[RMDB]
RNA sequence: GGGAACGACUCGAGUAGAGUCGAAAAGCAGUAUAGUGCCACUUGUGUGAGAAUACUUUUAGUACAAGCGAGUACACGCUCUAUACUGCCACUUGUGUGAGAAUACUUUUAGUACAAGCGAGUACACCUUUAAUACGUUUUUCGAAACGUAUUAAAGAAAAGAAACAACAACAACAAC
Reactivity to DMS in 0.01 (KOAc 150mM, MgCl2 10mM, bicine 150mM(pH8.5), 24C), signal-to-noise 7, nucleotides 027 to 126: g000c000a010g010u010a000u000a010g000u000g000c000c160a050c040u010u000g010u010g000u010g010a130g010a110a160u020a050c040u000u030u020u050a060g010u000a020c030a090a280g010c040g020a100g010u030a030c130a140c300g000c010u000c000u000a000u000a010c010u000g000c010c040a020c080u000u000g010u010g010u010g010a070g000a060a070u020a050c060u010u010u000u020a080g010u000a010c030a070a110g010c180g000a180g020u010a020c080a080c300
Reactivity to 2A3 in 0.01 (KOAc 150mM, MgCl2 10mM, bicine 150mM(pH8.5), 24C), signal-to-noise 9, nucleotides 027 to 126: g000c000a000g000u000a000u000a010g020u020g020c020c010a030c030u040u030g020u010g040u060g110a130g130a150a080u100a090c010u060u180u160u290a070g010u030a020c020a060a030g010c010g020a010g030u090a040c070a020c080g010c000u000c000u000a000u000a000c000u000g000c000c000a030c010u060u070g020u010g010u050g090a080g070a130a080u150a220c010u020u090u090u120a050g010u010a010c040a090a050g090c070g070a020g030u010a010c010a060c020